Source: RMDB library OK2TRN, as collected in RNAgym. Chemical mapping of a 177-nucleotide RNA with DMS and 2A3. The 2A3 profile rests on 831 reads.

RNA sequence: GGGAACGACUCGAGUAGAGUCGAAAAGAAUAUGCUGCGGGCGAGGGUGACCGAUGCGUUCGGUAAUGCGCUUGCCGGACAGACGGUCAGCGUGUUGGCAGGCAACGGUGCCACGACUGCUCCGACGCGUGGAAUCCCUUUUCGAAGGGAUUCCACGAAAAGAAACAACAACAACAAC
Reactivity to DMS in 0.01 (KOAc 150mM, MgCl2 10mM, bicine 150mM(pH8.5), 24C), signal-to-noise 1, nucleotides 027 to 126: g000a130a040u030a020u000g010c020u000g000c020g000g000g000c040g020a180g020g000g000u000g010a070c010c000g010a160u010g020c070g000u020u000c140g000g020u010a000a020u020g000c080g010c010u000u010g000c010c000g050g000a040c190a170g030a160c020g000g000u000c200a040g000c040g030u000g010u000u000g000g020c020a100g000g000c050a080a090c060g010g000u010g020c000c000a000c040g000a140c020u000g010c040u000c050c010g000a100c120g000
Reactivity to 2A3 in 0.01 (KOAc 150mM, MgCl2 10mM, bicine 150mM(pH8.5), 24C), signal-to-noise 1, nucleotides 027 to 126: g010a030a090u160a130u250g030c070u050g080c050g050g000g010c010g050a140g070g030g000u070g120a040c000c000g000a010u060g080c030g040u030u080c040g010g160u000a000a000u100g010c090g000c000u030u050g000c020c020g030g040a060c100a070g140a040c030g020g000u040c020a040g020c030g000u020g020u050u050g040g130c080a060g010g090c000a010a000c030g020g030u030g000c060c000a070c010g030a050c030u050g000c010u000c000c000g080a050c010g000